Conditions: 150 mM KOAc, 10 mM MgCl2 and 150 mM bicine (pH 8.5), 24 C. Chemical mapping of a 207-nucleotide RNA with 2A3 and DMS. Values cover nucleotides 27 to 156. It was measured as part of the RMDB library M2RFPK.

RNA sequence: GGGAACGACUCGAGUAGAGUCGAAAAGCAACGCAAAGCCGCGACAAGUGGAGUUAGCGAGAAGAGACUAGGCUUUGGUUUCUUCAAGUGAAGCGGUCACCAAUCAGGUGUGGUAGUUACCGUAAAAAUAACCGCUCUUUGUUCGCAAAGAGCGGAAGUGAAUUAGUUACUUCGGUAACUAAUUCACAAAAGAAACAACAACAACAAC
Reactivity to 2A3 in 0.01 (KOAc 150mM, MgCl2 10mM, bicine 150mM(pH8.5), 24C), signal-to-noise 7, nucleotides 027 to 156: g020c020a020a040c030g010c080a060a080a030g020c010c020g040c010g070a100c090a150a070g040u060g070g060a100g040u120u120a020g020c030g020a040g010a060a010g020a000g010a000c040u040a040g060g140c030u140u120u110g030g000u000u020u000c000u010u010c020a040a040g030u060g090a090a010g010c000g000g020u030c010a010c020c020a040a120u150c070a070g050g060u070g030u050g090g040u060a080g020u070u080a030c020c000g020u060a020a030a050a040a050u110a090a050c000c000g010c010u000c010u010u000u010g030u030u040c100g000c100a000a000a010g000a000g000c000g000g000a000a000
Reactivity to DMS in 0.01 (KOAc 150mM, MgCl2 10mM, bicine 150mM(pH8.5), 24C), signal-to-noise 4, nucleotides 027 to 156: g030c030a070a070c030g010c040a070a100a210g020c030c020g020c080g020a120c060a090a120g010u000g010g020a150g010u000u000a300g020c000g000a290g000a070a040g010a060g000a030c030u000a090g030g000c100u010u000u020g010g010u000u000u000c000u000u000c020a040a300g020u000g000a160a220g010c010g000g000u000c030a060c010c010a090a100u000c080a090g000g010u000g030u000g010g020u000a050g020u010u010a050c020c020g020u010a010a030a060a110a140u000a120a150c010c010g000c000u000c000u000u000u000g010u000u010c300g020c000a040a000a020g000a020g020c000g000g000a000a020